[RMDB]
Chemical mapping of a 177-nucleotide RNA with 2A3 and DMS.
RNA sequence: GGGAACGACUCGAGUAGAGUCGAAAAUUACCCGGCUUCGGCCGGGUAAACAGCAGAGGCGUCGCGUAGGAUGCCGGCUACUCAAGGGUUGUUCCCACGCGAGAAACGGGUCGUUCGCGACCCGUAAAUUGUUGACUAGAUUCGUCUAGUCAACAAUAAAAGAAACAACAACAACAAC
Reactivity to 2A3 in 0.01 (KOAc 150mM, MgCl2 10mM, bicine 150mM(pH8.5), 24C), signal-to-noise 1, nucleotides 027 to 126: u020u020a010c020c000c000g010g000c010u040u060c250g210g090c000c000g060g020g000u000a000a020a000c040a020g120c020a020g090a080g170g040c040g020u000c010g040c110g150u140a060g140g120a000u020g000c000c030g050g020c000u030a040c000u000c030a120a220g000g020g000u010u000g000u010u000c000c010c000a000c010g060c010g010a170g140a020a250a000c000g000g040g000u010c010g050u090u050c110g010c020g010a020c030c000c010g000u000a000a010
Reactivity to DMS in 0.01 (KOAc 150mM, MgCl2 10mM, bicine 150mM(pH8.5), 24C), signal-to-noise 3, nucleotides 027 to 126: u000u000a010c000c000c000g010g010c020u000u000c190g020g010c000c010g010g010g020u000a000a000a020c100a070g010c050a080g000a120g010g000c010g030u000c000g020c270g010u010a110g020g000a010u000g020c010c000g010g020c010u000a010c000u000c020a150a160g010g010g000u000u010g000u000u000c000c000c000a030c160g010c110g010a120g000a070a100a030c000g000g000g020u000c000g030u000u020c170g010c010g010a020c000c000c000g010u000a000a060
Source: RMDB library M2PK50, as collected in RNAgym. DMS adducts were read by reverse transcription with MarathonRT. As a SHAPE reagent, 2A3 marks flexible, mostly unpaired nucleotides at the ribose 2'-OH.